[RMDB]
Background:
An RNA of 207 nucleotides, treated with 2A3 and DMS and read out base by base. The RNA was probed in 150 mM KOAc, 10 mM MgCl2 and 150 mM bicine (pH 8.5) at 24 C. Values cover nucleotides 27 to 156. It was measured as part of the RMDB library M2RFPK. DMS adducts were read by reverse transcription with MarathonRT. For DMS, 7,046 sequencing reads were counted.
RNA sequence: GGGAACGACUCGAGUAGAGUCGAAAACAGAACUGGAUGGGCCGUGUGCUUAAUCAGGACAAGAUCUCCUUCUCUCCAACGUUGUUGCCAACUCAUGAUUCUCCUAACCUGUGCUUGGAGAGACGUGCUACCAUAUAGGUGUUCGCACCUAUAUGAAUCUACUACUUAGAUUCGUCUAAGUAGUAGAAAAAGAAACAACAACAACAAC
Reactivity to 2A3 in 0.01 (KOAc 150mM, MgCl2 10mM, bicine 150mM(pH8.5), 24C), signal-to-noise 3, nucleotides 027 to 156: c070a020g090a090a030c040u040g050g040a030u030g060g050g000c030c060g230u180g080u180g090c020u090u110a080a040u090c030a020g040g030a010c030a040a070g040a130u070c030u000c050c000u070u080c020u000c020u000c010c020a070a040c090g010u010u000g000u020u020g040c030c040a050a050c060u060c100a040u060g040a150u110u010c030u020c020c000u080a100a110c030c050u080g090u180g100c060u050u050g020g000a040g020a000g020a010c010g030u020g030c040u040a110c010c060a010u010a000u010a020g000g010u000g020u030u030c180g010c050a000c000c000u000a000u000a000u010g000a000a020
Reactivity to DMS in 0.01 (KOAc 150mM, MgCl2 10mM, bicine 150mM(pH8.5), 24C), signal-to-noise 3, nucleotides 027 to 156: c090a100g000a050a100c020u000g010g000a100u000g010g010g040c030c040g010u020g020u010g060c030u000u000a090a100u000c080a040g010g000a120c030a070a080g010a130u000c020u000c020c010u010u000c030u010c030u000c020c010a060a120c110g020u000u000g000u000u010g000c000c020a060a140c040u000c010a070u000g010a190u000u000c020u000c020c040u010a060a040c020c060u000g030u000g050c050u000u000g000g010a060g000a040g000a060c040g010u000g030c050u010a120c120c000a020u000a010u000a000g020g020u000g020u000u010c300g030c020a030c000c000u000a010u010a010u010g010a100a120